Chemical mapping of a 177-nucleotide RNA with DMS and 2A3. The reactions ran in a buffer of 150 mM KOAc, 10 mM MgCl2 and 150 mM bicine (pH 8.5), at 24 C. Source: RMDB libraries RFM100 and RFMREP, as collected in RNAgym. For DMS the reverse transcriptase was MarathonRT. Reactivities are given for positions 27 through 126.

[RMDB]
RNA sequence: GGGAACGACUCGAGUAGAGUCGAAAAGGAGUGGGUGCAAUAAAUGUCCCGUCUUGAAACACGGAUCAAGGAGGCCGUUUUAUGUGCGAGUGUAAGAGUAAUUAAAACUCCGACGCGUAUUGAAAGAAGAACGGACUAUUUUCGAAUAGUCCGUUCUAAAAGAAACAACAACAACAAC
Reactivity to DMS in 0.01 (KOAc 150mM, MgCl2 10mM, bicine 150mM(pH8.5), 24C), signal-to-noise 4, nucleotides 027 to 126: g000g000a050g020u000g010g020g010u010g020c050a080a160u010a030a060a080u010g000u000c040c010c010g020u010c020u000u000g000a100a090a120c130a040c090g000g000a120u000c050a010a020g000g000a090g000g000c270c030g000u000u000u000u010a090u020g000u000g010c030g000a060g030u020g000u020a130a080g010a060g010u000a060a100u040u030a080a070a130a040c010u010c000c090g010a090c110g010c040g020u020a060u020u010g000a110a050a080g000a120
Reactivity to 2A3 in 0.01 (KOAc 150mM, MgCl2 10mM, bicine 150mM(pH8.5), 24C), signal-to-noise 3, nucleotides 027 to 126: g050g000a090g040u170g020g020g050u070g000c000a040a130u040a100a120a050u150g020u010c000c000c020g030u050c010u010u030g060a060a050a000c070a010c050g010g000a040u050c020a000a060g060g010a060g090g000c020c020g000u030u000u010u030a130u040g080u000g010c040g020a050g010u080g000u070a040a000g010a000g070u050a010a120u150u200a040a040a010a010c000u000c010c020g040a050c060g000c010g000u040a040u020u170g080a070a090a110g070a060